[RMDB]
The record gives the reactivity of an RNA of 177 nucleotides to 2A3.
The reactions ran in a buffer of 150 mM KOAc, 10 mM MgCl2 and 150 mM bicine (pH 8.5), at 24 C.

RNA sequence: GGGAACGACUCGAGUAGAGUCGAAAAAAGCGGACAUCUUGCCAAACGAAAUGCUGACCGAGAUACCCUGAAGUAGCUUGCUAAUAGUGGCGAUGUCCUCCUGAGACAUGUGCGGCGCAGACGUCCCCUGCCGAUUGAGCUUCGGCUCAAUCGGCAGAAAAGAAACAACAACAACAAC
Reactivity to 2A3 in 0.01 (KOAc 150mM, MgCl2 10mM, bicine 150mM(pH8.5), 24C), signal-to-noise 1, nucleotides 027 to 126: a000a010g270c030g000g000a010c000a020u000c000u130u130g000c000c000a100a200a230c120g000a060a000a020u290g000c030u070g110a050c000c000g040a030g000a020u290a080c000c000c000u050g000a040a000g000u000a000g000c060u040u070g000c040u100a030a160u010a130g000u030g090g050c070g010a030u060g000u000c000c000u000c000c000u030g010a070g110a060c000a010u100g000u030g110c030g000g000c000g000c000a000g040a000c020g020u000c020c000c000